[RMDB]
RNA sequence: GGGAACGACUCGAGUAGAGUCGAAAAGGCUUAUUACGACAUCCGCCGCACCUCGUUGCUGGGACCCACUGUGCGGAUCCUUGGAAUGAUCGACAGGAUUGAGCCCAAGGUGAAGACCUACUGCCAGCUGCCUGAUAUCAUUCGUGAUAUCAGGCAGAAAAGAAACAACAACAACAAC
Reactivity to 2A3 in 0.01 (KOAc 150mM, MgCl2 10mM, bicine 150mM(pH8.5), 24C), signal-to-noise 2, nucleotides 027 to 126: g020g000c010u090u110a050u130u200a100c090g020a030c030a040u020c020c000g010c000c060g030c040a060c020c000u090c060g050u010u140g000c020u080g000g090g050a080c030c040c040a020c050u100g040u120g170c030g030g050a030u020c010c000u020u030g030g010a110a090u160g000a130u060c020g170a190c100a150g300g000a050u030u080g070a060g040c030c010c000a000a030g000g010u050g020a030a000g010a070c020c000u070a060c050u080g100c030c010a040g010
Reactivity to DMS in 0.01 (KOAc 150mM, MgCl2 10mM, bicine 150mM(pH8.5), 24C), signal-to-noise 3, nucleotides 027 to 126: g010g000c040u010u020a110u000u020a150c100g000a110c040a070u000c060c060g020c040c010g010c100a080c060c090u000c090g020u010u000g000c050u000g000g000g000a100c030c010c010a110c120u020g010u010g010c020g000g020a040u000c020c020u020u010g010g010a130a100u010g000a040u000c020g000a150c160a120g000g000a140u000u020g010a130g000c110c000c040a050a030g020g020u010g000a250a140g010a060c020c050u000a060c100u000g010c020c020a090g000